[RMDB]
RNA sequence: GGGAACGACUCGAGUAGAGUCGAAAAGAUAUGGAUACGCUGGAGCUCCUGUGCCUCUAAUAACCUCUUACUCGGAAACGAGUAAGAGGUUAUUAAGCACCUGAGCGUUGAAAGCGUAUCCUAAGUCGAUAGACACGUACUUCGGUACGUGUCUAUCAAAAGAAACAACAACAACAAC
Reactivity to DMS in 0.01 (KOAc 150mM, MgCl2 10mM, bicine 150mM(pH8.5), 24C), signal-to-noise 1, nucleotides 027 to 126: g000a030u020a300u010g010g000a000u010a020c000g010c000u000g000g000a110g010c000u000c000c030u010g000u000g000c010c020u010c040u000a000a000u000a000a010c000c000u010c000u000u000a020c000u040c010g010g000a100a090a210c000g010a000g000u000a000a010g010a000g000g000u000u000a000u000u000a010a160g010c000a010c000c010u000g000a010g010c020g020u010u000g020a160a160a040g000c000g010u000a000u000c000c000u000a010a110g000u010c090
Annotation: This 177-nucleotide RNA was probed chemically with DMS. For DMS the reverse transcriptase was MarathonRT. Reactivities are given for positions 27 through 126. For DMS, 1,910 sequencing reads were counted.